[RMDB]
RNA sequence: GGGAACGACUCGAGUAGAGUCGAAAAUCUCCUCUUUUGAGGAGACCUGGUGAGAGCGCUAGGAAGGGCUUUUAACGUUGCAUUGCCCCUAUACACCUUUUAACUGGUGUAUAGUUUGCCUCGUGGGCCAAUUUAAGUUUGCGUAGGAAGCAACGAAGGUCCUGGGCGGGUUCGUUUGCUCGGGGCCAAAAGAAACAACAACAACAAC
Reactivity to DMS in 0.01 (KOAc 150mM, MgCl2 10mM, bicine 150mM(pH8.5), 24C), signal-to-noise 2, nucleotides 027 to 156: u000c000u000c000c020u000c000u000u000u000u000g020a020g030g000a020g000a000c010c020u000g020g060u000g000a100g000a080g000c060g030c050u000a090g020g010a170a130g000g010g030c020u020u000u000u000a060a170c050g030u020u000g040c020a220u010u010g000c000c030c060c000u000a010u000a010c010a010c010c000u000u010u000u010a080a250c300u010g020g040u010g000u000a010u000a010g010u000u010u000g000c020c010u000c040g020u010g000g020g000c010c030a050a110u010u000u000a060a120g020u000u000u010g010c020g010u010a090g010g010a130a150g000c010a030a040c020g020a090a230
Reactivity to 2A3 in 0.01 (KOAc 150mM, MgCl2 10mM, bicine 150mM(pH8.5), 24C), signal-to-noise 4, nucleotides 027 to 156: u020c000u010c010c030u020c040u040u230u090u270g010a000g000g000a000g020a000c000c010u000g000g020u040g020a220g000a040g040c030g000c030u030a010g010g020a030a060g020g010g000c040u050u040u040u150a120a020c020g020u010u020g010c010a040u020u090g000c010c010c010c010u000a000u000a000c000a000c000c000u010u080u070u240a170a120c120u070g000g000u000g000u000a000u000a000g000u020u060u020g000c000c000u010c010g020u010g000g000g020c010c000a050a040u090u070u150a140a020g020u010u020u010g030c020g020u030a010g020g020a020a020g000c000a010a000c010g020a080a010